[RMDB]
RNA sequence: GGGAACGACUCGAGUAGAGUCGAAAAGGUAAAGAAUUGCACAAUCAACGGCACGUUGCGGAACAGUUCGACAUACAACGUACCCAGACCAGAGAGAAAACGGUUUGGAACGGUACGUAAAAUGCCGCGAGACACGAAGAUUCGUCUUCGUGUCUCGAAAAGAAACAACAACAACAAC
Reactivity to 2A3 in 0.01 (KOAc 150mM, MgCl2 10mM, bicine 150mM(pH8.5), 24C), signal-to-noise 1, nucleotides 027 to 126: g080g000u110a060a030a000g060a060a130u050u070g070c080a040c000a110a130u170c030a010a100c080g070g020c070a030c180g000u000u060g010c000g020g020a090a010c000a030g000u070u050c000g030a010c020a030u180a010c070a050a000c040g020u000a010c030c020c030a020g010a000c020c000a030g020a000g000a030g100a210a100a080a040c050g010g060u020u020u000g040g000a090a000c070g000g000u000a000c000g020u070a060a070a000a040u100g030c000c010g000
Reactivity to DMS in 0.01 (KOAc 150mM, MgCl2 10mM, bicine 150mM(pH8.5), 24C), signal-to-noise 2, nucleotides 027 to 126: g010g000u030a070a040a080g010a000a100u010u000g010c120a040c120a230a150u000c050a020a050c100g030g010c100a090c110g020u000u020g000c080g040g010a070a120c080a060g020u000u000c010g000a100c050a100u010a000c130a140a050c000g050u000a050c070c000c010a010g000a020c000c000a100g010a120g030a190g000a000a010a050a100c150g000g010u010u010u000g000g010a050a070c160g000g030u000a000c000g000u000a030a020a110a070u000g030c010c000g020
An RNA of 177 nucleotides, treated with 2A3 and DMS and read out base by base. 2A3 adducts were read by reverse transcription with SuperScript II with manganese.